[RMDB]
RNA sequence: GGGAACGACUCGAGUAGAGUCGAAAAGGGAUUUGUCCCUGGCCUGUUGAAACUGUUCUUGAACAGUUUCCUGAUAUAAGGAUUGCCCACAUGGCACUCAGCGUUGAAGAAAAAGCUCAGAUCGUAAUCGCAUAGAACUGUUCGCAGUUCUAUGCGAAAAAGAAACAACAACAACAAC
Reactivity to DMS in 0.01 (KOAc 150mM, MgCl2 10mM, bicine 150mM(pH8.5), 24C), signal-to-noise 1, nucleotides 027 to 126: g000g040g020a070u000u030u000g030u000c000c010c010u000g000g010c000c000u020g020u000u000g000a020a010a010c010u000g010u000u000c050u020u010g050a030a050c000a070g000u000u000u000c000c130u000g010a130u010a120u010a110a110g010g000a080u000u020g000c020c050c070a160c300a240u000g020g020c080a100c090u000c050a110g030c040g000u000u000g020a190a130g040a080a040a070a130a110g020c050u020c090a040g010a140u020c070g020u000a180a100

Structure probing data (DMS) for a 177-nucleotide construct. The reactions ran in a buffer of 150 mM KOAc, 10 mM MgCl2 and 150 mM bicine (pH 8.5), at 24 C. In probing experiments dimethyl sulfate is read out at A N1 and C N3, which are open when not base-paired. For DMS the reverse transcriptase was MarathonRT. Reactivities are given for positions 27 through 126.